[RMDB]
RNA sequence: GGGAACGACUCGAGUAGAGUCGAAAAGGACCCAGCUUCGGCUGGGUCCAAAGAGAUAGUACCUAUUGAGUUCCUGUGUAGGUACUCUUGACAGGAUGUCAAAAAGUAUGGACUUCGGUCCAUACAACAUGUAAUAAGUCUUCGGACUUAUUACAUGAAAAGAAACAACAACAACAAC
Reactivity to DMS in 0.01 (KOAc 150mM, MgCl2 10mM, bicine 150mM(pH8.5), 24C), signal-to-noise 8, nucleotides 027 to 126: g020g010a020c000c000c000a010g020c000u000u010c180g030g010c000u000g010g010g020u000c000c000a010a030a090g000a170g000a120u010a020g010u000a010c000c000u000a020u000u000g000a140g010u000u000c000c000u000g000u010g000u000a010g000g010u000a000c000u000c160u010u000g010a030c030a170g010g010a150u010g020u010c010a070a060a090a100a110g010u000a000u000g000g000a010c000u000u010c190g030g000u000c000c000a000u000a000c010a090a160
Reactivity to 2A3 in 0.01 (KOAc 150mM, MgCl2 10mM, bicine 150mM(pH8.5), 24C), signal-to-noise 6, nucleotides 027 to 126: g010g000a010c010c000c010a000g010c010u040u070c180g150g000c000u000g000g010g000u010c000c000a010a000a000g010a000g000a020u070a080g010u010a000c010c010u010a010u030u140g080a080g020u020u020c010c010u040g010u020g010u060a000g000g000u000a000c000u000c020u040u050g010a010c010a050g200g190a270u190g040u050c020a020a030a000a030a040g000u000a000u000g000g000a000c000u020u050c260g080g000u010c000c000a000u000a000c000a000a000
Notes
Conditions: 150 mM KOAc, 10 mM MgCl2 and 150 mM bicine (pH 8.5), 24 C. Structure probing data (DMS and 2A3) for a 177-nucleotide construct. It was measured as part of the RMDB library M2PK50. The DMS profile rests on 17,512 reads. For 2A3, 18,237 sequencing reads were counted.